[RMDB]
RNA sequence: GGGAACGACUCGAGUAGAGUCGAAAAGGGGUCUCAUCCCGAGAUGCAUUCCUAUUCUUGGAUUUAUGUUCUGAAGCCUCCACGGAACAUUGUCAGAAUAGGUGCAUCGUUUGACGGAUGAGACGGAGGCACCCAAACCUAGGCUUCGGCCUAGGAAACCAUGCAACAGUUUCGACUGUUGCAUGGUAAAAGAAACAACAACAACAAC
Reactivity to 2A3 in 0.01 (KOAc 150mM, MgCl2 10mM, bicine 150mM(pH8.5), 24C), signal-to-noise 2, nucleotides 027 to 156: g050g010g040g030u010c000u000c000a000u010c000c010c000g010a040g000a000u000g000c000a000u120u180c000c010u010a010u000u020c060u100u300g160g000a060u200u290u090a020u100g000u000u010c010u020g030a080a030g010c010c010u000c020c010a020c020g000g000a000a000c000a000u000u010g020u040c110a100g010a010a010u000a000g010g030u010g000c000a000u000c000g010u150u170u090g010a010c020g000g000a000u000g000a000g000a000c010g000g000a000g000g000c000a050c000c000c010a020a050a060c010c000u000a000g010g000c000u010u090c300g100g000c000c000u000a000g000g000a010a000